[RMDB]
RNA sequence: GGGAACGACUCGAGUAGAGUCGAAAACAUCAUCCUGACUAGUCUUUCGGGAGGAUACGCCUCACUCUGGAAGACAACCAAAAACUCUUCCAGUGUUUGAUAAAAUAAAGAAUUCAAACCCUCGGAGACUUGUACUGUCUUUCGAGACAGUACAAGUAAAAGAAACAACAACAACAAC
Reactivity to 2A3 in 0.01 (KOAc 150mM, MgCl2 10mM, bicine 150mM(pH8.5), 24C), signal-to-noise 7, nucleotides 027 to 126: c020a080u160c000a030u020c000c000u050g050a100c070u090a040g060u040c020u020u040u030c030g030g010g010a020g010g000a040u080a180c090g100c010c010u030c010a110c020u110c020u040g000g010a010a000g010a000c010a030a030c060c020a040a050a070a070a060c030u000c000u040u010c000c020a000g010u010g020u020u000u010g030a050u050a040a130a040a010u240a100a190a040g110a060a070u060u010c010a010a010a010c000c010c000u000c030g030g000a030g020
Reactivity to DMS in 0.01 (KOAc 150mM, MgCl2 10mM, bicine 150mM(pH8.5), 24C), signal-to-noise 3, nucleotides 027 to 126: c180a090u020c060a090u000c010c010u030g020a070c160u010a120g000u010c080u020u000u000c020g010g000g030a060g010g020a090u010a100c210g000c060c060u020c030a150c050u050c000u010g000g000a020a000g000a020c040a150a080c140c100a070a070a040a090a070c230u020c020u000u000c010c030a010g000u000g020u000u020u020g000a030u020a040a040a070a070u060a070a050a170g010a060a110u000u000c030a000a010a090c020c030c010u010c190g010g000a070g000